[RMDB]
RNA sequence: GGGAACGACUCGAGUAGAGUCGAAAAUUCUUUGACCAAGAAUAGUCAGCAAAUUGUAUUUUCAAUCAAUGCAGACCAUUUGUUUCAGAUUCGGAGAUUUUUUGCUGCCAAACGGAAUAACUAUCAUAAGAACAACUAAGUUCGCUUAGUUGUUCUUAAAAGAAACAACAACAACAAC
Reactivity to 2A3 in 0.01 (KOAc 150mM, MgCl2 10mM, bicine 150mM(pH8.5), 24C), signal-to-noise 2, nucleotides 027 to 126: u030u010c000u030u030u090g060a040c050c060a010a030g010a090a030u060a100g060u070c010a000g020c000a000a050a100u080u040g070u050a060u050u080u000u040c020a010a000u010c000a010a080u100g000c000a020g060a080c040c030a140u100u130u160g050u000u050u070c040a020g000a040u010u060c120g040g000a030g040a070u160u040u030u010u000u030g020c000u000g020c010c010a060a050a050c060g050g070a070a050u100a110a010c050u060a080u190c030a040u020
Reactivity to DMS in 0.01 (KOAc 150mM, MgCl2 10mM, bicine 150mM(pH8.5), 24C), signal-to-noise 2, nucleotides 027 to 126: u010u000c010u000u000u010g020a160c110c080a110a040g010a080a010u000a140g000u000c010a020g000c010a010a050a010u000u020g010u000a040u000u010u000u000c000a030a010u000c010a100a100u010g010c070a020g000a080c130c200a110u000u000u000g010u000u000u010c110a100g010a090u000u000c110g020g000a040g000a010u000u000u020u000u000u000g000c010u000g000c040c050a020a070a080c210g000g000a090a060u010a050a070c080u010a060u010c110a100u010

Conditions: 150 mM KOAc, 10 mM MgCl2 and 150 mM bicine (pH 8.5), 24 C.
This 177-nucleotide RNA was probed chemically with 2A3 and DMS.
It was measured as part of the RMDB library RFMREP.
The 2A3 profile rests on 1,438 reads.
High 2A3 reactivity points to a flexible backbone, as in loops and unpaired stretches.